[RMDB]
This 177-nucleotide RNA was probed chemically with 2A3.
Source: RMDB library RFM100, as collected in RNAgym.
For 2A3, 421 sequencing reads were counted.
Reactivities are given for positions 27 through 126.
For 2A3 the reverse transcriptase was SuperScript II with manganese.
RNA sequence: GGGAACGACUCGAGUAGAGUCGAAAAGAGAAUUGUUUAUAUUAAAAACAGGCUGAGAAUAGUUUGACCUCUGAUCACCAAAAAACCUGGAGGAUAAACAUUCAUCUGUCAAGAUUUCUCUGGAAAAUUACCAAGUAUCGUUCGCGAUACUUGGUAAAAAAGAAACAACAACAACAAC
Reactivity to 2A3 in 0.01 (KOAc 150mM, MgCl2 10mM, bicine 150mM(pH8.5), 24C), signal-to-noise 2, nucleotides 027 to 126: g020a000g010a000a090u020u010g060u100u020u090a300u020a220u300u290a270a230a020a000a000c030a050g000g000c020u070g020a010g020a050a010u040a040g030u070u000u000g060a050c010c000u010c000u000g110a110u170c070a130c120c000a080a300a110a060a000a000c050c110u060g030g010a010g000g000a060u100a050a000a000c000a000u000u000c020a150u020c010u020g020u020c000a000a000g030a220u020u030u020c010u030c010u000g110g070a030a050a010a010